RNA sequence: GGGAACGACUCGAGUAGAGUCGAAAAACGAUGGCCGUAUAUCGGCCCAAAAGGUACGUCCGAGACUAGGAGGUUAAUAGGCCCGGAGUGUAAGCGUAGAAAUACGUGGAGCUGAAAAUAAAACAAACAAGCAUACGAAGUUCGCUUCGUAUGCUUGAAAAGAAACAACAACAACAAC
Reactivity to DMS in 0.01 (KOAc 150mM, MgCl2 10mM, bicine 150mM(pH8.5), 24C), signal-to-noise 2, nucleotides 027 to 126: a160c140g000a120u000g000g010c050c010g000u010a150u010a190u000c020g000g000c000c010c120a020a020a070a070g020g000u000a040c060g030u010c010c000g000a080g010a030c050u000a060g020g000a060g020g010u010u000a070a060u010a060g000g010c020c000c030g000g000a060g020u000g040u010a240a120g000c010g000u000a010g000a180a090a180u000a010c010g020u000g000g000a210g000c020u000g000a040a050a040a070u010a090a020a110a050c170a070a070a130
Reactivity to 2A3 in 0.01 (KOAc 150mM, MgCl2 10mM, bicine 150mM(pH8.5), 24C), signal-to-noise 1, nucleotides 027 to 126: a000c060g060a120u130g010g000c000c000g010u060a130u000a010u300c020g010g000c000c000c010a050a040a010a040g100g020u060a040c000g030u000c030c020g000a040g010a060c030u060a040g000g110a060g090g010u120u160a100a070u060a130g100g000c030c030c020g060g020a040g010u050g000u060a060a000g000c010g000u000a000g010a010a070a010u010a000c000g000u030g000g000a010g020c010u050g020a000a000a060a100u210a020a100a020a050c030a000a040a030